[RMDB]
Description
The record gives the reactivity of an RNA of 177 nucleotides to DMS and 2A3. For 2A3 the reverse transcriptase was SuperScript II with manganese.
RNA sequence: GGGAACGACUCGAGUAGAGUCGAAAAUGGCUCAGGGCUCCAUCUGCCCUGCGGCUGCCACCUUCCAGGUGGCACUGAGCCCAGCCUCUGUGGAUGAGGCCCCUCAGCCCAGCUUGCCCCCCGAGGCCCUCAACUAUAUCUUCGGAUAUAGUUGAGGAAAAGAAACAACAACAACAAC
Reactivity to DMS in 0.01 (KOAc 150mM, MgCl2 10mM, bicine 150mM(pH8.5), 24C), signal-to-noise 7, nucleotides 027 to 126: u000g000g010c020u000c050a030g010g010g010c010u000c110c140a090u010c120u000g010c010c050c020u000g010c180g020g020c080u000g020c010c010a020c010c010u010u010c240c230a120g020g020u000g010g010c010a020c050u000g000a070g000c010c010c180a150g000c090c010u000c020u010g010u010g010g010a110u010g010a050g010g010c010c050c120c010u000c050a070g010c020c020c040a090g000c060u010u000g000c020c010c010c010c010c020g000a100g000g020c150
Reactivity to 2A3 in 0.01 (KOAc 150mM, MgCl2 10mM, bicine 150mM(pH8.5), 24C), signal-to-noise 5, nucleotides 027 to 126: u090g010g000c000u020c030a020g010g000g000c010u040c110c030a170u060c060u080g020c000c010c010u010g030c060g020g000c030u020g000c010c000a000c000c010u300u280c110c130a040g000g000u010g000g010c000a000c020u060g030a010g010c000c010c020a010g010c040c020u050c040u080g130u130g150g060a090u080g020a070g030g010c020c000c000c010u030c020a020g010c000c020c000a040g050c040u100u160g040c020c010c000c000c020c010g010a040g030g030c010
For DMS, 11,941 sequencing reads were counted. Source: RMDB library OK2TST, as collected in RNAgym. The RNA was probed in 150 mM KOAc, 10 mM MgCl2 and 150 mM bicine (pH 8.5) at 24 C.